[RMDB]
RNA sequence: GGGAACGACUCGAGUAGAGUCGAAAAACAGAAGAAAUGGGAGAUAUUGAAGCAUUGCAAGGUGUAUCUCAAUUCCCAGCUCGUAUUAAAUGUGCCACAUUAGCUUGGAAAGCAUUGGAAAAAGGUACUUAACGCCCUUAUUCGUAAGGGCGUUAAGAAAAGAAACAACAACAACAAC
Reactivity to DMS in 0.01 (KOAc 150mM, MgCl2 10mM, bicine 150mM(pH8.5), 24C), signal-to-noise 4, nucleotides 027 to 126: a050c110a080g010a110a110g020a030a050a140u000g020g000g010a080g010a050u050a080u000u020g010a040a080g020c020a020u000u020g020c210a060a090g000g000u000g000u000a070u050c050u000c030a020a040u020u000c000c010c000a020g010c210u000c050g010u030a110u050u030a060a080a090u020g000u000g000c020c020a060c110a040u030u000a060g010c040u030u010g010g000a050a050a070g000c010a070u020u000g020g000a030a020a040a090a050g010g020u000a100
Reactivity to 2A3 in 0.01 (KOAc 150mM, MgCl2 10mM, bicine 150mM(pH8.5), 24C), signal-to-noise 4, nucleotides 027 to 126: a010c110a030g090a070a000g020a050a210a000u090g010g080g010a060g040a110u110a060u070u070g020a030a010g020c010a020u000u250g060c080a130a120g100g000u030g020u020a160u020c020u030c060a010a030u020u010c000c020c020a000g000c010u020c020g020u070a110u070u220a120a110a040u140g040u040g040c010c040a020c010a060u090u140a040g020c030u060u050g070g020a060a080a000g020c000a010u040u060g040g070a000a000a050a040a130g070g000u030a040